[RMDB]
RNA sequence: GGGAACGACUCGAGUAGAGUCGAAAACUGAAUUUCGAUUCAGGCCUCUCCUAAGUCAACGUUGAGCAAUCCGGAACGAAGAACGUAUCGGAAACGAUACGGGAGUUCUAGGAUUGCAAUGAUGCGUUGAUAUGGACGUCUCAGUAUUCGUACUGAAUUCACAUUUGUGAUUCGUCACAAAUGUGAAAAAAGAAACAACAACAACAAC
Reactivity to DMS in 0.01 (KOAc 150mM, MgCl2 10mM, bicine 150mM(pH8.5), 24C), signal-to-noise 3, nucleotides 027 to 156: c000u020g000a040a100u000u000u010c170g030a200u000u000c000a050g020g030c010c050u000c050u010c010c010u000a060a250g010u000c000a010a010c010g010u000u010g000a060g020c000a020a010u000c000c000g000g000a030a010c000g010a120a130g030a110a240c010g020u000a010u000c000g000g000a180a070a220c000g030a020u000a000c010g010g000g020a150g020u000u000c000u000a090g070g000a010u000u020g000c010a020a020u000g010a030u000g000c000g020u000u000g010a030u000a260u000g010g000a070c120g000u010c070u000c050a070g010u000a050u010u020c210g020u000a090c010u020g000a070a300
Reactivity to 2A3 in 0.01 (KOAc 150mM, MgCl2 10mM, bicine 150mM(pH8.5), 24C), signal-to-noise 7, nucleotides 027 to 156: c000u010g010a020a020u140u120u160c290g110a050u020u050c020a010g070g000c010c010u030c010u000c010c000u090a210a060g010u000c000a000a000c010g010u010u050g030a020g000c000a010a000u000c000c000g000g010a010a010c020g110a210a050g020a050a010c000g000u000a000u000c000g000g060a080a060a050c020g000a000u000a000c000g010g010g000a030g000u010u010c040u110a260g000g000a000u000u000g000c000a000a000u010g000a010u070g000c000g000u000u000g000a000u000a010u020g020g000a020c090g160u020c040u000c120a010g010u030a070u080u160c230g040u080a020c010u010g030a070a110
Source: RMDB library RNAMAK, as collected in RNAgym. Structure probing data (DMS and 2A3) for a 207-nucleotide construct. For 2A3, 11,093 sequencing reads were counted. In probing experiments dimethyl sulfate is read out at A N1 and C N3, which are open when not base-paired. High 2A3 reactivity points to a flexible backbone, as in loops and unpaired stretches. The reactions ran in a buffer of 150 mM KOAc, 10 mM MgCl2 and 150 mM bicine (pH 8.5), at 24 C.